[RMDB]
RNA sequence: GGGAACGACUCGAGUAGAGUCGAAAAGAGCGCGUACUGCGCCACCAUGCGUUCGCGGGCCUUGACGUUGCCGCGCACGAAAUCGCGCACUUCGCUGCCCAGGGCCGCCUGCGCCGCCGCCACCGAGGGUAUGUUUCGGAUUCGUCCGAAACAUACCAAAAGAAACAACAACAACAAC
Reactivity to 2A3 in 0.01 (KOAc 150mM, MgCl2 10mM, bicine 150mM(pH8.5), 24C), signal-to-noise 2, nucleotides 027 to 126: g070a050g010c030g000c040g030u160a200c100u170g010c010g000c010c000a010c000c000a070u080g010c000g050u060u050c050g000c040g040g040g110c000c040u060u150g050a040c060g060u080u100g030c020c050g010c010g000c000a010c040g130a060a070a050u160c040g000c000g040c030a010c060u130u120c030g030c040u080g000c030c060c000a000g000g020g010c000c020g040c060c020u050g000c000g030c000c020g050c030c010g020c010c010a050c040c010g040a080g050
Reactivity to DMS in 0.01 (KOAc 150mM, MgCl2 10mM, bicine 150mM(pH8.5), 24C), signal-to-noise 2, nucleotides 027 to 126: g010a100g040c030g000c030g040u030a100c120u010g010c040g000c010c030a090c110c030a100u010g030c030g010u000u000c070g000c030g050g000g000c050c050u000u000g020a100c150g000u000u010g010c030c080g030c020g000c060a050c090g020a060a090a110u010c180g010c000g030c020a070c040u000u000c090g030c040u000g000c010c030c020a060g010g000g020c010c040g000c020c010u000g020c040g020c100c080g010c040c030g010c010c030a070c000c010g010a110g020
An RNA of 177 nucleotides, treated with 2A3 and DMS and read out base by base. The DMS profile rests on 1,616 reads. For DMS the reverse transcriptase was MarathonRT. The RNA was probed in 150 mM KOAc, 10 mM MgCl2 and 150 mM bicine (pH 8.5) at 24 C.